[RMDB]
This 177-nucleotide RNA was probed chemically with 2A3 and DMS. The reactions ran in a buffer of 150 mM KOAc, 10 mM MgCl2 and 150 mM bicine (pH 8.5), at 24 C. Values cover nucleotides 27 to 126. The DMS profile rests on 837 reads. It was measured as part of the RMDB library M2PK50. 2A3 is a SHAPE reagent: it acylates the 2'-hydroxyl of flexible nucleotides of all four kinds. DMS adducts were read by reverse transcription with MarathonRT.
RNA sequence: GGGAACGACUCGAGUAGAGUCGAAAAGCAUAUGGCUUCGGCCAUAUGCAAAGACAAGAGGAGGAAGGUGGCUUGUCAAAUAACCACCAAUAAAAAUAAUAAAAAUCUGACGGUUCGCCGUCAGAAACUAGAUUGUAAUCUUCGGAUUACAAUCUAGAAAAGAAACAACAACAACAAC
Reactivity to 2A3 in 0.01 (KOAc 150mM, MgCl2 10mM, bicine 150mM(pH8.5), 24C), signal-to-noise 1, nucleotides 027 to 126: g000c000a010u000a010u010g000g000c010u090u070c190g130g000c000c010a000u000a000u000g030c000a000a010a020g040a000c050a030a000g000a010g170g050a090g040g000a200a030g040g080u040g030g000c040u000u000g090u140c040a240a000a000u080a060a010c000c000a010c010c040a060a000u260a080a040a000a010a030u300a130a040u110a100a090a050a000a100u030c000u000g000a010c000g010g060u010u060c220g000c100c000g000u000c010a000g000a000a000a000
Reactivity to DMS in 0.01 (KOAc 150mM, MgCl2 10mM, bicine 150mM(pH8.5), 24C), signal-to-noise 1, nucleotides 027 to 126: g000c000a000u000a000u010g000g010c000u000u000c270g030g020c000c000a010u010a000u000g000c000a010a090a090g000a130c080a050a050g030a100g010g000a110g020g000a190a140g000g010u010g020g000c020u000u000g010u000c170a060a080a110u000a060a090c050c020a030c050c020a140a050u040a000a090a050a080a020u020a100a150u000a040a000a050a150a140u000c010u000g000a030c030g010g020u000u020c190g000c000c000g010u000c010a000g010a010a020a050